[RMDB]
RNA sequence: GGGAACGACUCGAGUAGAGUCGAAAAUACAAGAAGAAAGCAGCAUAUUAUGAAGAUUGAUAUUCCAGGGGGAAGGUGGGGUACAGCUGGUCAAUAAGUUGCGGUUCAUCGCCUACUAUUCUUGGGCGAGACCGUAAGUUUUCGAACUUACGGUCUCAAAAGAAACAACAACAACAAC
Reactivity to 2A3 in 0.01 (KOAc 150mM, MgCl2 10mM, bicine 150mM(pH8.5), 24C), signal-to-noise 1, nucleotides 027 to 126: u120a010c010a050a000g060a040a000g020a060a180a000g000c020a000g000c010a070u040a040u140u160a130u190g030a030a030g110a100u000u140g030a030u020a040u120u040c020c020a020g030g020g000g000g000a030a020g060g000u050g010g000g000g060u030a010c030a010g000c020u060g010g070u050c060a030a040u100a120a020g040u080u040g040c010g010g070u070u040c010a050u070c060g000c000c000u010a030c000u070a110u050u050c050u050u080g050g030g010c020
Reactivity to DMS in 0.01 (KOAc 150mM, MgCl2 10mM, bicine 150mM(pH8.5), 24C), signal-to-noise 2, nucleotides 027 to 126: u000a060c130a060a050g000a060a060g000a070a090a070g020c010a010g030c050a070u010a030u000u000a100u000g000a080a070g020a110u000u000g020a130u000a050u000u000c070c080a100g000g000g000g000g000a100a020g020g020u000g020g010g000g030u010a010c120a050g020c030u000g010g010u060c060a070a080u010a070a060g010u020u010g010c140g010g020u010u000c100a070u000c050g000c010c020u000a060c200u000a090u010u000c060u000u000g000g010g000c060